RNA sequence: GGGAACGACUCGAGUAGAGUCGAAAAGCACCAAAAGCACCGACGGGAUAACCUGAUCCGAGUGCCUUGGAGAUCACCGUGAUGUCGGGCUGAACCAUGUAGCGACUUUGAGCUCCGCCGGCCGCGAGCAUCGUUGACAGUUCGCUGUCAACGAUGCAAAAGAAACAACAACAACAAC
Reactivity to DMS in 0.01 (KOAc 150mM, MgCl2 10mM, bicine 150mM(pH8.5), 24C), signal-to-noise 2, nucleotides 027 to 126: g000c170a190c000c010a070a020a130a250g000c030a050c030c020g030a070c030g020g010g000a180u000a100a130c060c110u020g010a080u000c050c000g000a090g010u000g000c030c060u000u010g010g000a160g010a160u000c040a070c090c020g000u010g030a100u000g000u000c020g020g000g000c000u000g030a070a070c050c090a040u000g010u010a070g020c020g000a080c030u000u010u000g000a080g000c040u000c020c020g000c020c020g020g020c050c100g040c050g010a140
Reactivity to 2A3 in 0.01 (KOAc 150mM, MgCl2 10mM, bicine 150mM(pH8.5), 24C), signal-to-noise 2, nucleotides 027 to 126: g030c010a020c020c000a000a010a000a060g040c020a030c020c020g070a060c030g060g040g000a070u130a280a260c030c050u020g040a140u000c070c030g020a060g060u040g000c000c000u020u060g030g010a060g000a000u070c040a000c080c040g050u080g080a060u110g040u070c040g010g060g040c060u030g010a030a020c010c010a070u080g030u070a030g040c030g100a120c000u070u040u190g050a040g000c020u000c080c050g030c000c040g040g000c020c000g060c000g030a040
The record gives the reactivity of an RNA of 177 nucleotides to DMS and 2A3. For 2A3, 1,434 sequencing reads were counted. Values cover nucleotides 27 to 126.